[RMDB]
RNA sequence: GGGAACGACUCGAGUAGAGUCGAAAAGAAAGAAAGAAACUGUCCAGUGCGUGUCGGAGAGUAAUUUCAUGUUAGUGACAUCAUACUACUGUCAUGGAGUUGCUCUCUUAUUAGCGCUGAGGCCAAAUCGAAUAUCCAGCUUCGGCUGGAUAUUCGAAAAAGAAACAACAACAACAAC
Reactivity to 2A3 in 0.01 (KOAc 150mM, MgCl2 10mM, bicine 150mM(pH8.5), 24C), signal-to-noise 2, nucleotides 027 to 126: g150a020a080a000g100a030a110a020g080a020a120a040c070u050g000u010c000c000a000g000u000g000c030g030u090g020u030c020g000g000a000g000a000g000u030a000a000u000u010u020c020a020u000g020u030u040a000g000u030g050a060c010a120u180c010a060u100a290c070u060a000c010u040g020u060c000a000u000g020g000a020g000u000u000g000c000u000c000u010c000u000u000a000u000u010a010g000c000g020c000u000g000a170g000g030c000c000a000a070a130
Reactivity to DMS in 0.01 (KOAc 150mM, MgCl2 10mM, bicine 150mM(pH8.5), 24C), signal-to-noise 1, nucleotides 027 to 126: g070a100a140a040g030a000a070a130g020a110a150a070c110u010g000u000c000c000a020g050u000g020c030g000u000g010u020c090g020g010a000g000a000g000u030a000a000u000u000u000c000a020u000g000u000u000a000g000u000g010a160c300a130u050c280a100u070a160c290u090a010c040u000g000u000c010a000u000g000g000a000g000u000u000g000c000u000c000u010c000u020u000a000u050u000a300g030c000g030c000u000g000a000g010g000c010c200a090a050a130
Structure probing data (2A3 and DMS) for a 177-nucleotide construct. Conditions: 150 mM KOAc, 10 mM MgCl2 and 150 mM bicine (pH 8.5), 24 C. Values are in units of 0.01, from 0 to 300, in steps of 10. For 2A3, 1,073 sequencing reads were counted. It was measured as part of the RMDB library RFM100.